[RMDB]
Notes:
An RNA of 177 nucleotides, treated with DMS and 2A3 and read out base by base. The RNA was probed in 150 mM KOAc, 10 mM MgCl2 and 150 mM bicine (pH 8.5) at 24 C. For 2A3 the reverse transcriptase was SuperScript II with manganese. It was measured as part of the RMDB libraries RFM100 and RFMREP. Values cover nucleotides 27 to 126.
RNA sequence: GGGAACGACUCGAGUAGAGUCGAAAAUGCUGCCUUCCGCAAAGCUGCAGCGCGGCGCUCUGGAGGCCUUGCCCCGCGCACUGCUCUUUACAUGGCCCGACGUGAGGGCACUUCGCGGGCAGUGCUGAUAUCUGAUCCGAUUCGUCGGAUCAGAUAUAAAAGAAACAACAACAACAAC
Reactivity to DMS in 0.01 (KOAc 150mM, MgCl2 10mM, bicine 150mM(pH8.5), 24C), signal-to-noise 7, nucleotides 027 to 126: u010g020c090u010g010c010c010u000u020c030c120g000c130a070a160a230g010c020u000g010c030a160g040c180g020c030g010g000c090g010c110u010c080u020g010g000a050g000g010c030c110u010u010g010c050c010c010c060g030c120g000c000a020c010u000g000c000u010c010u000u010u030a240c230a080u020g010g000c000c000c010g000a190c200g010u040g000a190g010g000g010c010a030c010u000u000c120g000c300g000g000g000c000a020g030u000g010c010u010g000
Reactivity to 2A3 in 0.01 (KOAc 150mM, MgCl2 10mM, bicine 150mM(pH8.5), 24C), signal-to-noise 9, nucleotides 027 to 126: u120g010c040u040g010c010c000u040u070c020c020g040c070a010a060a080g030c050u110g060c070a130g080c040g000c010g090g010c020g010c040u050c060u100g030g010a010g000g020c000c010u030u100g050c000c000c010c000g040c010g010c010a000c010u010g020c010u010c010u060u200u150a100c070a170u190g040g000c000c000c000g120a180c090g140u200g120a200g000g010g020c030a120c030u060u100c060g020c060g020g010g000c010a010g000u000g000c000u010g010